The data come from the RNA Mapping Database (RMDB), library OK2TRN. Chemical mapping of a 177-nucleotide RNA with DMS. Conditions: 150 mM KOAc, 10 mM MgCl2 and 150 mM bicine (pH 8.5), 24 C.
RNA sequence: GGGAACGACUCGAGUAGAGUCGAAAAAAGCCACACGCACGAAAAAGCGGCUUAGCGGCUGCACAACCGGCCCUGCACCGAUGGAAACGAAGGCGAAUUUUGCCCCGCCGAGGCGCGCGGCCAGCGACGUGGAUAUCACGUUCGCGUGAUAUCCACGAAAAGAAACAACAACAACAAC
Reactivity to DMS in 0.01 (KOAc 150mM, MgCl2 10mM, bicine 150mM(pH8.5), 24C), signal-to-noise 2, nucleotides 027 to 126: a060a040g020c020c020a050c130a090c000g010c010a060c090g050a080a120a050a160a090g000c000g000g010c020u010u000a180g010c210g000g000c000u010g010c050a120c160a090a050c110c070g010g000c030c000c010u000g010c040a030c020c010g000a150u000g020g000a060a110a050c180g000a050a130g000g010c040g000a060a210u000u000u010u000g010c060c010c100c020g020c010c010g000a160g020g000c000g000c050g040c130g000g000c030c050a040g000c090g020a070